An RNA of 207 nucleotides, treated with DMS and 2A3 and read out base by base.
2A3 is a SHAPE reagent: it acylates the 2'-hydroxyl of flexible nucleotides of all four kinds.
The 2A3 profile rests on 1,671 reads.
RNA sequence: GGGAACGACUCGAGUAGAGUCGAAAACUAGUCGAUCUCGAGAAGCUGAAGGAGAAGAGAGUCGAAGGAUCCUGAAGCUGAAGCUCUUCCUAGUCGAUCAGUCGAAGUCUCCUCUGAUCGAAGAGAGUCUCGAGACUAGGAAGGAGAGAAGAGAGGACGUCGAAGACUAUUUCGAUAGUCUUCGACGAAAAGAAACAACAACAACAAC
Reactivity to DMS in 0.01 (KOAc 150mM, MgCl2 10mM, bicine 150mM(pH8.5), 24C), signal-to-noise 1, nucleotides 027 to 156: c070u010a080g010u000c020g000a040u000c000u000c030g000a170g000a120a020g010c040u040g010a300a030g000g010a120g000a110a080g000a100g020a080g010u000c040g020a150a100g020g020a120u000c000c010u000g000a300a050g010c020u000g010a070a120g020c060u000c000u000u010c000c020u000a050g040u010c010g000a140u000c060a090g020u000c010g030a070a140g000u000c030u000c000c010u010c000u000g000a050u030c280g000a040a020g030a150g010a120g000u010c060u000c020g000a240g010a020c000u000a050g000g020a040a080g020g000a060g000a080g010a080a100g000a050g020a120g010g000a090
Reactivity to 2A3 in 0.01 (KOAc 150mM, MgCl2 10mM, bicine 150mM(pH8.5), 24C), signal-to-noise 3, nucleotides 027 to 156: c040u050a020g100u060c030g100a140u000c020u000c010g050a040g020a080a010g000c010u030g020a040a000g000g030a050g020a170a010g090a060g030a010g090u100c110g060a100a090g080g020a060u010c010c020u020g010a010a000g000c000u020g020a050a010g040c000u000c000u030u000c010c010u010a000g020u000c010g060a220u210c110a050g160u060c020g040a150a040g060u000c020u070c060c020u020c000u030g280a300u170c100g070a180a000g010a010g000a000g030u010c000u000c030g080a060g000a000c000u000a000g010g010a010a010g120g030a010g000a000g010a100a000g040a000g000a010g030g010a010